The record gives the reactivity of an RNA of 207 nucleotides to 2A3. Values cover nucleotides 27 to 156.
RNA sequence: GGGAACGACUCGAGUAGAGUCGAAAAGUUAUGCUCUCGCUGCCUAAUGGCGGUGCGGGAAACCCACUCUAAAGUCCUUAGGGUUAGCCCCUUAAGGCGGGCUUCGGAGGCACCUGGCAACAGAAGCUGAAACUGUGCACAUUCGUGUGCACAGUAAAGGUUAAGAUGCUUUCGAGCAUCUUAACCUAAAAGAAACAACAACAACAAC
Reactivity to 2A3 in 0.01 (KOAc 150mM, MgCl2 10mM, bicine 150mM(pH8.5), 24C), signal-to-noise 1, nucleotides 027 to 156: g030u010u070a120u260g020c000u010c010u000c000g000c020u000g000c000c020u220a300a140u300g000g000c030g030g030u020g010c050g000g010g180a060a080a040c020c000c050a000c010u030c090u080a110a060a080g100u060c000c000u010u010a010g000g030g010u030u080a040g060c000c000c000c000u030u030a000a000g030g010c040g000g010g000c000u070u010c050g010g010a050g020g000c020a050c040c160u070g140g000c010a010a000c000a070g020a070a010g010c010u020g080a030a080a000c010u000g000u000g000c000a000c010a040u000u180c110g090u020g000u010g040c000a000c000a000g000u000a000a080

The reactions ran in a buffer of 150 mM KOAc, 10 mM MgCl2 and 150 mM bicine (pH 8.5), at 24 C.